[RMDB]
RNA sequence: GGGAACGACUCGAGUAGAGUCGAAAAGCGUAAGGCUCUUCAGGCUGAACAAAGCAAGAUUGAAAUGGAGUCUAAAAUCCAGGCACUGGAGCGCGAAAAGGAGGAGCUUAAACAACAAGUGGAGGAGCGAGGGUAAUCAGUUCGCUGAUUACCCUCGAAAAGAAACAACAACAACAAC
Reactivity to 2A3 in 0.01 (KOAc 150mM, MgCl2 10mM, bicine 150mM(pH8.5), 24C), signal-to-noise 3, nucleotides 027 to 126: g020c020g040u060a090a060g030g000c010u000c000u020u050c010a030g060g050c010u120g110a130a020c060a120a080a000g060c020a070a070g060a240u140u170g040a060a050a070u230g060g000a010g020u000c040u060a000a000a000a110u020c020c010a030g110g070c050a010c150u070g020g030a060g010c010g010c020g050a000a110a000a070g080g010a000g000g040a010g000c000u050u080a100a060a090c050a050a010c020a070a060g040u020g010g100a030g000g000a000g030
Reactivity to DMS in 0.01 (KOAc 150mM, MgCl2 10mM, bicine 150mM(pH8.5), 24C), signal-to-noise 2, nucleotides 027 to 126: g020c010g040u010a100a040g030g000c000u000c010u000u000c040a080g010g050c000u000g000a090a150c140a080a070a040g000c040a110a070g010a100u020u010g000a070a070a070u050g000g010a030g040u010c050u010a040a040a090a070u000c000c010a050g010g000c120a100c060u020g000g000a090g000c030g000c050g000a080a040a050a070g000g000a030g000g020a070g000c040u000u020a010a040a110c180a080a060c170a050a080g000u020g000g000a130g000g000a090g010
Source: RMDB library OK1LIB, as collected in RNAgym. This 177-nucleotide RNA was probed chemically with 2A3 and DMS. Conditions: 150 mM KOAc, 10 mM MgCl2 and 150 mM bicine (pH 8.5), 24 C. For 2A3, 1,658 sequencing reads were counted.